[RMDB]
Structure probing data (DMS and 2A3) for a 177-nucleotide construct. For 2A3, 1,636 sequencing reads were counted. For 2A3 the reverse transcriptase was SuperScript II with manganese.
RNA sequence: GGGAACGACUCGAGUAGAGUCGAAAAGAUAUGGAUCUGCUACCCACCGCAAGAACUACAGCUAGUCGGAAACGACAGGGCUGCUUGCGAGGCAGAUCCUAAGUCAAAAGGUCUGUUCGCAGACCAAGUUCAGUGAGUACUUCGGUACUCACUGAACAAAAGAAACAACAACAACAAC
Reactivity to DMS in 0.01 (KOAc 150mM, MgCl2 10mM, bicine 150mM(pH8.5), 24C), signal-to-noise 2, nucleotides 027 to 126: g000a080u000a170u000g030g000a000u020c000u000g020c000u000a140c000c010c030a300c070c000g010c010a010a030g000a070a110c090u000a300c030a010g000c000u030a110g010u000c000g000g000a030a020a130c010g000a000c010a010g010g000g000c010u000g000c000u010u000g010c000g010a040g000g000c010a000g000a040u010c000c000u000a020a050g010u010c230a060a140a160a010g000g000u010c000u010g000u000u000c130g000c000a010g000a000c000c000a020a050
Reactivity to 2A3 in 0.01 (KOAc 150mM, MgCl2 10mM, bicine 150mM(pH8.5), 24C), signal-to-noise 1, nucleotides 027 to 126: g070a030u230a180u250g000g000a000u010c000u000g000c000u090a300c040c000c010a000c020c010g000c010a000a000g010a130a080c090u140a090c300a000g000c000u010a010g030u000c010g030g110a100a050a060c020g030a000c010a050g280g050g000c000u040g080c000u000u010g000c010g020a000g050g000c000a000g000a000u010c000c000u000a000a000g160u080c140a000a000a080a190g000g010u060c020u000g020u100u140c290g020c150a000g000a000c010c000a000a000